[RMDB]
An RNA of 177 nucleotides, treated with DMS and 2A3 and read out base by base. The reactions ran in a buffer of 150 mM KOAc, 10 mM MgCl2 and 150 mM bicine (pH 8.5), at 24 C. Reactivities are rounded to 0.1 and cut off at 0 and 3. 2A3 adducts were read by reverse transcription with SuperScript II with manganese. Values cover nucleotides 27 to 126. It was measured as part of the RMDB library OK1LIB. The DMS profile rests on 1,930 reads.
RNA sequence: GGGAACGACUCGAGUAGAGUCGAAAAGAGUUGAGAAAAGAGUGGAUUUGGAUAGAGUUUUAGGUUCUUUAUUUAGUGCAGUGAUUGGUUACAGCCAGAGUCAAAGAGCCCCAGACACGGAGAAAGAAACUUCCUGACAUUUCGAUGUCAGGAAGUUAAAAGAAACAACAACAACAAC
Reactivity to DMS in 0.01 (KOAc 150mM, MgCl2 10mM, bicine 150mM(pH8.5), 24C), signal-to-noise 2, nucleotides 027 to 126: g020a170g000u010u010g010a130g000a090a080a050a090g010a080g020u000g000g000a090u000u020u020g000g000a080u030a120g010a110g020u000u000u010u000a120g010g010u020u010c040u000u030u020a010u010u000u010a060g000u000g030c040a100g010u010g020a110u060u020g020g010u060u040a090c160a080g000c060c010a140g000a050g000u000c060a020a040a050g010a050g030c030c000c060c070a060g000a090c080a020c050g000g020a130g010a070a060a070g040a120
Reactivity to 2A3 in 0.01 (KOAc 150mM, MgCl2 10mM, bicine 150mM(pH8.5), 24C), signal-to-noise 1, nucleotides 027 to 126: g070a010g030u060u110g020a040g030a030a180a120a000g120a010g000u070g040g040a220u070u030u140g040g020a030u020a060g080a050g070u000u000u140u070a030g040g000u030u030c000u090u040u120a240u190u100u070a060g000u000g010c030a030g080u050g030a050u120u090g080g020u000u130a100c010a060g000c040c000a000g000a060g110u040c000a040a030a010g000a060g000c000c000c000c000a000g060a010c000a020c050g100g030a110g020a060a070a050g050a150